RNA sequence: GGGAACGACUCGAGUAGAGUCGAAAACUGGUCAGGACAUGAUGGCCGACCUGAUGGGUAUCGCGGCAAACAUCAAUAUCGGUAAGACUGUGGCAAUCAGCCGCAUUGCUUCCGAUGCUGGCAAGGUCGUCCGCACUCUGUCUGGUCAGGAGCCGGAGGCACAAUCUUAGUUCGCUAAGAUUGUGCCAAAAGAAACAACAACAACAAC
Reactivity to 2A3 in 0.01 (KOAc 150mM, MgCl2 10mM, bicine 150mM(pH8.5), 24C), signal-to-noise 4, nucleotides 027 to 156: c000u010g000g010u030c000a040g220g000a090c020a080u300g030a060u100g050g000c010c000g010a000c000c010u050g060a120u160g040g040g090u200a120u180c100g000c020g090g010c070a100a100a080c050a140u160c090a120a050u090a060u170c050g000g120u260a030a010g030a030c020u000g020u010g010g000c010a060a280u110c060a300g000c000c010g000c010a040u060u240g030c000u010u000c040c000g000a000u000g000c010u030g060g030c030a040a020g000g000u020c000g020u010c020c000g020c020a080c030u030c020u020g000u000c000u010g010g020u010c010a010g000g000a010g030c010c000g000g090a090
Reactivity to DMS in 0.01 (KOAc 150mM, MgCl2 10mM, bicine 150mM(pH8.5), 24C), signal-to-noise 1, nucleotides 027 to 156: c020u000g000g030u000c030a090g030g070a050c070a050u000g020a120u000g010g010c020c030g020a040c010c000u010g010a150u000g000g010g020u000a010u000c060g040c050g020g000c020a060a020a090c060a080u010c040a070a100u000a100u000c050g000g030u000a150a060g000a100c110u000g000u000g000g030c050a150a200u020c180a170g020c040c000g050c030a100u000u000g040c000u030u000c010c000g010a030u000g020c020u010g010g000c080a140a060g040g000u000c030g020u000c010c010g030c050a100c090u020c020u020g020u010c030u000g030g020u020c020a100g030g000a190g000c000c000g000g000a300
This 207-nucleotide RNA was probed chemically with 2A3 and DMS.
DMS (dimethyl sulfate) methylates the pairing face of unpaired adenines and cytosines.
DMS adducts were read by reverse transcription with MarathonRT.
The reactions ran in a buffer of 150 mM KOAc, 10 mM MgCl2 and 150 mM bicine (pH 8.5), at 24 C.